An RNA of 170 nucleotides, treated with 2A3 and DMS and read out base by base. The reactions ran in a buffer of 150 mM KOAc, 10 mM MgCl2 and 150 mM bicine (pH 8.5), at 24 C. The 2A3 profile rests on 35,295 reads.
RNA sequence: GGGAACGACUCGAGUAGAGUCGAAAACCCUGUCUCCUCGGUUCUUCUUCGAUCCGGACCGGCUCAUCUCGGCAAAGGGCGGCAGUCCUCAGUGCUCUUACUCUUUCCUAUAAAGAGGAGACUGCUGGCAUGUCUCACUUCGGUGAGACAAAAAGAAACAACAACAACAAC
Reactivity to 2A3 in 0.01 (KOAc 150mM, MgCl2 10mM, bicine 150mM(pH8.5), 24C), signal-to-noise 9, nucleotides 027 to 129: c000c000c000u010g020u010c020u010c000c000u020c000g020g010u050u030c030u110u010c010u070u080c070g060a070u010c020c030g010g050a050c010c010g020g000c000u010c020a100u020c030u020c020g010g000c040a090a050a090g040g010g000c010g010g010c010a010g030u030c000c000u030c030a040g020u050g090c010u010c000u040u130a300c000u030c000u030u040u040c020c040u140a120u180a230a100a010g010a000g000g010a000g010a000c000u010g010c000u010g060g040c080a090
Reactivity to DMS in 0.01 (KOAc 150mM, MgCl2 10mM, bicine 150mM(pH8.5), 24C), signal-to-noise 8, nucleotides 027 to 129: c000c010c020u030g020u030c000u020c020c020u000c010g020g020u000u000c020u010u010c010u030u030c120g060a110u050c060c030g000g000a080c100c070g010g060c000u000c070a080u000c000u010c000g040g000c110a080a100a140g010g010g020c080g010g050c130a040g020u000c000c010u000c040a040g000u030g030c180u020c000u010u030a210c050u000c000u020u010u040c120c080u040a120u080a010a030a020g030a000g000g000a030g010a060c010u010g000c050u020g020g060c110a110